Source: RMDB library OK2TST, as collected in RNAgym. Structure probing data (2A3 and DMS) for a 177-nucleotide construct. The reactions ran in a buffer of 150 mM KOAc, 10 mM MgCl2 and 150 mM bicine (pH 8.5), at 24 C. For 2A3 the reverse transcriptase was SuperScript II with manganese. For DMS, 17,353 sequencing reads were counted.

[RMDB]
RNA sequence: GGGAACGACUCGAGUAGAGUCGAAAAAUGGGUGAAUCUGAAGUGUCUAAGAACAAAUUGGCGCUUGUUGUGGGUUCUUAUUUCCAAUUCAAAACUGGUUUGUGUGAGACAUUUUCUCGUACCAACAUAAGCCUAAAUAUUUCGAUAUUUAGGCUUAAAAAGAAACAACAACAACAAC
Reactivity to 2A3 in 0.01 (KOAc 150mM, MgCl2 10mM, bicine 150mM(pH8.5), 24C), signal-to-noise 2, nucleotides 027 to 126: a000u080g040g000g030u020g000a020a010u000c010u010g030a020a010g000u020g000u020c020u060a050a020g050a180a030c040a040a130a070u070u030g020g000c030g050c020u030u050g060u130u150g070u130g050g010g010u000u020c010u040u010a040u030u040u000c020c030a010a070u170u300c050a010a060a050a090c080u110g050g000u020u020u010g000u020g010u020g000a020g010a020c050a130u100u110u060u040c000u030c020g030u030a020c040c020a010a030c000a040
Reactivity to DMS in 0.01 (KOAc 150mM, MgCl2 10mM, bicine 150mM(pH8.5), 24C), signal-to-noise 9, nucleotides 027 to 126: a050u000g010g020g020u000g010a060a030u010c040u000g010a040a030g020u000g010u000c010u010a080a090g010a140a110c180a050a080a120u000u000g010g010c040g020c100u000u000g010u010u010g030u010g010g000g000u000u000c060u000u010a080u000u000u000c010c010a080a110u010u010c160a050a040a110a120c180u000g000g010u000u000u000g010u000g010u000g010a040g010a080c210a060u000u000u000u000c010u000c030g010u000a050c020c040a040a060c110a150